[RMDB]
RNA sequence: GGGAACGACUCGAGUAGAGUCGAAAACAUGACACCUAUGUGAUAGGUUUUAUUCUAAUAACUUAUCUAAAUGAUACCUUCAUGAUACUGUGUCACAGAAAUACAGAUUGUGGAAUAAUGUGACAUUCUCCCACAGGUCUUAAGAGAGAAUGAAUGAUAAAUACGUCGUCUUCGGACGACGUAUUUAAAAAGAAACAACAACAACAAC
Reactivity to DMS in 0.01 (KOAc 150mM, MgCl2 10mM, bicine 150mM(pH8.5), 24C), signal-to-noise 1, nucleotides 027 to 156: c050a060u000g020a070c090a050c010c080u000a100u000g010u000g020a060u000a080g020g000u000u000u000u040a060u020u000c100u000a150a130u000a020a060c020u000u000a020u020c020u000a150a020a120u040g000a100u000a010c000c010u000u000c080a030u000g000a100u000a080c190u000g010u000g010u000c020a130c060a080g020a100a150a100u000a130c100a020g010a260u000u040g020u000g010g030a120a140u000a060a150u000g020u020g010a140c010a040u000u000c070u000c000c000c000a230c070a070g020g000u020c060u010u000a040a210g000a130g000a100g060a020a060u000g000a080a060u000g000a230
Reactivity to 2A3 in 0.01 (KOAc 150mM, MgCl2 10mM, bicine 150mM(pH8.5), 24C), signal-to-noise 2, nucleotides 027 to 156: c040a050u060g050a020c040a050c070c010u080a060u150g100u040g070a020u020a020g010g080u020u000u040u060a100u120u110c180u160a180a120u100a020a110c010u050u010a010u020c020u100a030a140a110u130g050a050u030a050c010c020u040u040c030a010u000g120a050u070a160c010u030g000u000g000u020c020a010c020a080g100a020a190a000u120a030c010a040g140a150u090u150g060u030g040g050a030a050u130a080a170u150g000u000g040a000c000a050u040u020c010u000c010c000c000a040c020a020g070g060u020c080u070u110a150a060g070a000g020a090g000a090a020u090g070a010a010u110g050a080

An RNA of 207 nucleotides, treated with DMS and 2A3 and read out base by base.
It was measured as part of the RMDB library OK3TST.
DMS adducts were read by reverse transcription with MarathonRT.
Values cover nucleotides 27 to 156.
2A3 adducts were read by reverse transcription with SuperScript II with manganese.
The 2A3 profile rests on 675 reads.